The data come from the RNA Mapping Database (RMDB), library RFMREP. Structure probing data (2A3 and DMS) for a 177-nucleotide construct. Values cover nucleotides 27 to 126. The reactions ran in a buffer of 150 mM KOAc, 10 mM MgCl2 and 150 mM bicine (pH 8.5), at 24 C.
RNA sequence: GGGAACGACUCGAGUAGAGUCGAAAAGCUGUGUUCGCACAGCAUACCUUCAUUUCACGUACUCUCUCGCCGGUCAGAGAGGCGAGAGAGUGUGCAAAAUGAAGAGACUGUCGGGUGUUCGCACCCGCCAGGAGAUGAGUUUCGACUCAUCUCCUGGAAAAGAAACAACAACAACAAC
Reactivity to 2A3 in 0.01 (KOAc 150mM, MgCl2 10mM, bicine 150mM(pH8.5), 24C), signal-to-noise 3, nucleotides 027 to 126: g000c000u010g000u010g040u050u120c220g050c090a010c010a000g000c010a010u070a050c000c000u000u000c000a000u010u020u020c050a020c050g040u060a020c030u020c000u000c000u000c010g000c020c020g140g100u200c130a020g060a000g020a080g240g000c010g000a000g000a000g000a000g000u000g010u010g000c010a020a040a000a020u000g000a010a000g020a000g020a050c010u050g060u170c020g000g010g000u020g040u060u100c180g010c070a000c000c010c000g000
Reactivity to DMS in 0.01 (KOAc 150mM, MgCl2 10mM, bicine 150mM(pH8.5), 24C), signal-to-noise 2, nucleotides 027 to 126: g020c000u020g010u000g020u000u010c150g000c010a030c000a000g000c010a060u000a040c050c000u010u000c000a000u000u000u010c070a140c050g010u010a010c000u000c000u000c000u000c010g020c000c000g020g020u010c230a150g000a190g000a140g010g030c010g010a000g000a010g010a000g020u000g010u000g000c090a070a040a020a010u000g000a010a000g010a060g010a270c050u000g000u010c030g030g010g030u000g000u000u010c180g030c010a000c010c000c000g000